The data come from the RNA Mapping Database (RMDB), library OK3TST. Chemical mapping of a 207-nucleotide RNA with 2A3. Values are in units of 0.01, from 0 to 300, in steps of 10. The reactions ran in a buffer of 150 mM KOAc, 10 mM MgCl2 and 150 mM bicine (pH 8.5), at 24 C.
RNA sequence: GGGAACGACUCGAGUAGAGUCGAAAAAACGGUGACACUUUCGAUUACUAAUGGGCUUUUGCAUGCAACACCGGGAGAUGUCGGACCUGCGACUGGUGUUGCAACGACCGCUGCAGAUUCUGGUGACGAAGUGAGUGUGACUGGAUUUGAAGGGGUACCAGGUGGACAAUUUCGAUUGUCCACCUGGAAAAGAAACAACAACAACAAC
Reactivity to 2A3 in 0.01 (KOAc 150mM, MgCl2 10mM, bicine 150mM(pH8.5), 24C), signal-to-noise 1, nucleotides 027 to 156: a010a010c100g010g000u010g060a000c010a000c020u120u140u100c030g110a220u110u100a060c020u080a060a100u100g020g070g000c030u020u020u020u300g030c040a070u070g020c010a000a000c000a030c010c000g050g040g000a090g000a020u060g130u080c050g020g100a300c010c030u220g060c020g000a010c000u010g000g000u060g000u080u000g000c000a000a020c070g010a000c000c020g040c020u020g020c010a000g010a190u020u160c020u190g100g000u050g020a030c030g020a110a050g090u100g060a000g070u020g020u010g050a020c000u030g000g130a030u070u000u070g100a070a060g000g000g010g020u040a050